[RMDB]
RNA sequence: GGGAACGACUCGAGUAGAGUCGAAAAGGCAGCGGGUAUAGGUAUGAGGUCUGACUCAAUGUUUGAUGGAAUGCGGUAUCAAAUACUGCCACGGCGCUGGCAUGGGGCAGGGCAAGCUGGAACACGCGGCAGUAUUACCAUUCGUGGUAAUACUGCCAAAAGAAACAACAACAACAAC
Reactivity to 2A3 in 0.01 (KOAc 150mM, MgCl2 10mM, bicine 150mM(pH8.5), 24C), signal-to-noise 2, nucleotides 027 to 126: g030g000c020a010g010c020g000g000g050u090a110u070a120g110g020u090a090u110g070a050g060g060u060c060u040g050a060c000u010c050a080a090u190g030u100u050u090g050a070u050g020g020a150a030u090g030c030g010g010u010a020u110c010a010a070a040u060a050c020u010g000c000c000a040c040g150g060c060g000c080u000g010g000c020a010u070g000g000g000g000c040a000g010g000g000c020a040a010g040c020u060g020g010a050a010c050a010c110g070c040
Reactivity to DMS in 0.01 (KOAc 150mM, MgCl2 10mM, bicine 150mM(pH8.5), 24C), signal-to-noise 2, nucleotides 027 to 126: g010g000c060a040g020c080g000g010g000u010a080u010a040g000g010u000a070u000g020a170g010g010u000c070u000g000a140c070u010c090a060a050u000g010u010u000u000g010a080u020g000g020a050a080u010g000c090g010g000u010a020u000c090a040a030a150u010a070c100u000g000c010c030a040c040g010g000c070g010c080u010g020g020c050a040u010g010g000g010g030c050a020g010g010g020c070a020a130g010c050u000g000g000a090a060c080a080c120g010c150
An RNA of 177 nucleotides, treated with 2A3 and DMS and read out base by base. It was measured as part of the RMDB library OK2TST. The reactions ran in a buffer of 150 mM KOAc, 10 mM MgCl2 and 150 mM bicine (pH 8.5), at 24 C. For DMS, 2,228 sequencing reads were counted.